[RMDB]
RNA sequence: GGGAACGACUCGAGUAGAGUCGAAAAUCUAUUGUGCAAGGUAAGCAAAAAAGGAUCCAGCUUAGGUAAAAAGAAACAUGUCUUACAGCCAGAGUUUACACUCCAUAAAAUGGAGUAUGUUCUGAGUACUUCAACCAUGGUUCGCCAUGGUUGAAGUAAAAGAAACAACAACAACAAC
Reactivity to 2A3 in 0.01 (KOAc 150mM, MgCl2 10mM, bicine 150mM(pH8.5), 24C), signal-to-noise 2, nucleotides 027 to 126: u000c000u000a150u020u180g120u070g000c000a040a030g090g000u120a160a000g040c000a000a000a000a000a000a220g020g020a010u050c020c020a010g080c140u110u080a090g070g010u120a140a080a000a000a030g080a020a150a000c070a050u190g070u100c000u040u060a080c040a000g000c000c000a040g010a000g020u030u000u000a040c050a000c050u000c000c000a040u150a120a260a030a070u070g040g000a000g000u010a070u050g090u030u000c010u010g000a020g140u000
Reactivity to DMS in 0.01 (KOAc 150mM, MgCl2 10mM, bicine 150mM(pH8.5), 24C), signal-to-noise 1, nucleotides 027 to 126: u090c000u000a020u000u050g000u000g000c120a040a100g060g160u020a030a190g050c070a000a010a140a030a180a210g000g000a020u000c020c000a020g000c030u000u000a040g040g000u000a000a000a000a040a010g030a070a130a010c120a040u000g030u020c120u000u000a130c100a150g050c220c000a050g000a040g000u050u000u020a100c050a070c000u000c000c030a000u020a000a080a090a150u000g000g000a040g040u000a080u000g030u080u000c000u020g000a050g000u000

Conditions: 150 mM KOAc, 10 mM MgCl2 and 150 mM bicine (pH 8.5), 24 C. An RNA of 177 nucleotides, treated with 2A3 and DMS and read out base by base. Reactivities are rounded to 0.1 and cut off at 0 and 3. It was measured as part of the RMDB library RFM100. The 2A3 profile rests on 865 reads.